RNA sequence: GGGAACGACUCGAGUAGAGUCGAAAAAUCCGCAGCACGUGGCUUGCGCGGCGCGGGGCCCCGGGCGACGUGUGGGCGCGCUUUGCCGUGGGCACGGCCGGCCUGGGCGCCGAGGAGCGGCGCGCCCGCACAGUAGGAUUUUCGAAUCCUACUGUGCAAAAGAAACAACAACAACAAC
Reactivity to DMS in 0.01 (KOAc 150mM, MgCl2 10mM, bicine 150mM(pH8.5), 24C), signal-to-noise 2, nucleotides 027 to 126: a110u000c020c010g020c130a170g010c070a040c050g020u000g010g000c090u000u010g010c010g000c020g030g000c040g000c060g010g000g000g010c040c030c010c040g020g010g020c040g020a020c050g010u000g020u000g010g000g010c010g010c060g000c030u000u010u010g020c020c010g000u010g000g010g010c060a100c010g020g020c060c050g000g010c020c010u010g000g000g010c090g010c010c000g010a080g010g010a160g020c110g000g000c010g010c000g020c000c020c020
Reactivity to 2A3 in 0.01 (KOAc 150mM, MgCl2 10mM, bicine 150mM(pH8.5), 24C), signal-to-noise 3, nucleotides 027 to 126: a010u030c010c010g050c040a030g040c010a010c080g050u110g080g040c040u080u250g000c010g000c040g140g000c030g000c030g040g000g100g020c000c030c000c000g030g000g010c020g030a030c040g020u050g000u070g040g110g020c020g000c010g000c000u130u150u210g050c070c020g030u070g000g120g010c060a000c020g020g000c080c010g050g060c000c010u090g020g050g040c120g030c010c020g030a040g030g050a140g040c030g010g000c000g000c000g010c010c000c000